[RMDB]
Structure probing data (DMS and 2A3) for a 177-nucleotide construct. The 2A3 profile rests on 3,777 reads.

RNA sequence: GGGAACGACUCGAGUAGAGUCGAAAAUCUGUUCCCUUCGGGGAACAGAACUCCGCCUGGACUUAAAGCCAUUGCACUUAAGAAAAUAAACAAACAAAAUAAGCCCUUCUGGUUUCGACCAGAAGAAUACGAUACAUAGUUUCGACUAUGUAUCGUAAAAAGAAACAACAACAACAAC
Reactivity to DMS in 0.01 (KOAc 150mM, MgCl2 10mM, bicine 150mM(pH8.5), 24C), signal-to-noise 2, nucleotides 027 to 126: u000c000u000g000u000u010c000c000c000u000u010c180g030g000g020g000a020a000c000a000g000a010a080c080u000c050c100g030c100c050u010g010g010a120c030u000u000a040a050a110g020c040c060a040u000u010g030c070a060c080u020u000a070a090g010a090a060a050a040u000a040a060a110c120a040a060a060c060a050a040a080a060u010a090a130g000c150c040c010u010u000c000u000g010g000u000u000u010c210g000a030c000c000a000g000a000a010g000a100a100
Reactivity to 2A3 in 0.01 (KOAc 150mM, MgCl2 10mM, bicine 150mM(pH8.5), 24C), signal-to-noise 3, nucleotides 027 to 126: u000c000u000g000u000u000c010c000c000u000u020c160g060g020g000g020a000a000c010a010g010a010a000c010u040c030c000g050c040c030u060g030g020a120c010u060u100a080a080a040g000c010c010a090u050u180g000c070a080c070u060u060a110a000g050a090a110a090a080u220a060a100a030c060a040a090a030c010a020a160a100a150u170a140a070g020c040c020c000u000u020c010u010g000g020u030u060u110c180g030a010c000c000a000g000a000a000g000a000a000

The RNA was probed in 150 mM KOAc, 10 mM MgCl2 and 150 mM bicine (pH 8.5) at 24 C.